[RMDB]
RNA sequence: GGGAACGACUCGAGUAGAGUCGAAAAGCUGCCUAAUAAGCAGUAGCAUAGCUGAUCCUCCGUGCAUCGCCCAUGUGCUACGGUAAGGGUCUCACUUUAAGUGGGCUACACUAAAUAAUCUCCGUCUGGGGUUAGUUAGAAGAGCUUAAUCAGACUAGUUUCUCUGAAAGUUCGCUUUCAGAGAAACAAAAGAAACAACAACAACAAC
Reactivity to 2A3 in 0.01 (KOAc 150mM, MgCl2 10mM, bicine 150mM(pH8.5), 24C), signal-to-noise 4, nucleotides 027 to 156: g010c000u020g010c000c020u130a150a060u260a170a020g000c030a010g020u070a010g050c090a130u100a140g050c060u080g030a030u030c000c000u000c000c000g010u000g000c000a000u000c030g000c010c000c000a000u020g010u010g000c070u120a020c000g000g020u050a120a110g030g000g030u030c060u100c080a150c070u140u200u180a110a030g000u000g000g000g000c000u010a000c010a000c010u010a000a010a030u000a000a020u000c000u010c020c060g010u000c010u000g000g000g000g000u000u000a000g000u010u010a000g010a050a000g000a030g040c080u150u150a010a020u070c000a000g000a000c000u010a040
Reactivity to DMS in 0.01 (KOAc 150mM, MgCl2 10mM, bicine 150mM(pH8.5), 24C), signal-to-noise 1, nucleotides 027 to 156: g010c000u000g000c000c000u130a180a130u000a140a070g000c000a020g040u000a040g030c080a150u090a180g000c050u000g010a050u020c010c000u010c000c020g040u000g030c000a040u000c160g030c030c040c060a100u000g000u000g000c010u010a030c000g020g020u000a110a130g010g010g000u010c040u000c020a090c130u000u010u000a060a080g080u010g020g010g000c020u000a270c060a290c010u000a010a030a020u000a030a000u000c000u000c040c080g010u010c070u000g040g000g010g010u010u000a000g000u000u000a000g000a110a070g000a200g000c060u000u010a060a120u000c040a060g000a070c020u000a230